[RMDB]
An RNA of 207 nucleotides, treated with 2A3 and read out base by base. For 2A3, 1,377 sequencing reads were counted. The RNA was probed in 150 mM KOAc, 10 mM MgCl2 and 150 mM bicine (pH 8.5) at 24 C.
RNA sequence: GGGAACGACUCGAGUAGAGUCGAAAACGUCGUACCACUUCCCGUGUCGAUACCCGGCCACCCUGCCGCGGUGAGGUACGUGCGCGGGCUGCGGGAUCAGCGUGUCCAGCUCGAAGUACCGGUGGCGGAUCACGCCGAGACCGAACAUCUCGCCGCAGCCACAUUACCAAUUCGUUGGUAAUGUGGCAAAAGAAACAACAACAACAAC
Reactivity to 2A3 in 0.01 (KOAc 150mM, MgCl2 10mM, bicine 150mM(pH8.5), 24C), signal-to-noise 2, nucleotides 027 to 156: c060g070u050c010g000u020a040c010c000a050c020u030u000c000c010c000g000u070g050u030c130g040a050u110a140c000c000c000g020g000c060c100a180c080c060c060u040g010c010c050g040c160g000g000u040g010a040g010g010u000a020c030g000u020g020c030g000c000g000g010g000c010u050g000c020g000g000g070a040u020c000a000g000c000g010u020g020u040c000c060a090g000c010u010c080g120a270a090g180u190a190c060c050g070g020u140g070g020c080g000g010a080u260c020a000c010g010c000c000g000a020g020a000c030c000g010a060a050c060a010u030c000u000c010g110c090c000g000c010a000